About this RNA:
An RNA of 207 nucleotides, treated with DMS and 2A3 and read out base by base. Reactivities are rounded to 0.1 and cut off at 0 and 3. The reactions ran in a buffer of 150 mM KOAc, 10 mM MgCl2 and 150 mM bicine (pH 8.5), at 24 C. Values cover nucleotides 27 to 156. For DMS the reverse transcriptase was MarathonRT. Source: RMDB library ARCHII, as collected in RNAgym.
[RMDB]
RNA sequence: GGGAACGACUCGAGUAGAGUCGAAAAUGGGUCCUGCGCAAUGGGAAUUCAUGAACCAUGUCAGGUCCGGAAGGAAGCAGCAUUAAGUGAAACCUCUCAUGUGCCGCAGGGUUGCCUGGGCCGAGCUAACUGCUUAAGUAACGCUUAGGGUAGCGAAGUCGAUAAAUAACUUCGGUUAUUUAUCGACAAAAGAAACAACAACAACAAC
Reactivity to DMS in 0.01 (KOAc 150mM, MgCl2 10mM, bicine 150mM(pH8.5), 24C), signal-to-noise 3, nucleotides 027 to 156: u020g020g030g000u000c010c000u000g010c060g000c070a120a040u000g000g020g030a070a300u020u000c040a060u000g010a150a200c120c140a060u010g090u000c010a230g000g000u000c010c030g010g060a090a180g030g000a030a090g010c000a200g030c010a070u000u000a090a240g030u000g010a040a080a100c070c090u020c010u000c020a080u000g000u000g010c020c050g040c050a040g010g010g020u000u000g000c000c050u010g010g010g000c040c000g000a160g000c010u000a050a070c080u000g080c070u020u000a040a050g000u000a050a130c160g000c010u000u010a120g010g010g030u010a070g040c030g000a080a170
Reactivity to 2A3 in 0.01 (KOAc 150mM, MgCl2 10mM, bicine 150mM(pH8.5), 24C), signal-to-noise 4, nucleotides 027 to 156: u090g010g010g030u300c000c000u000g000c000g000c020a020a000u010g000g010g000a010a070u020u010c000a010u050g020a070a070c110c020a030u010g030u070c010a000g000g000u000c000c000g030g070a080a070g010g000a010a000g000c010a000g000c000a010u020u070a080a020g020u010g040a040a040a070c050c030u000c000u010c010a030u100g070u090g300c140c020g000c010a000g020g000g000u020u140g010c000c000u020g000g040g000c000c020g030a020g020c020u050a060a080c040u110g010c020u150u080a040a030g020u040a120a040c050g000c100u020u050a040g010g010g040u050a030g040c030g060a100a010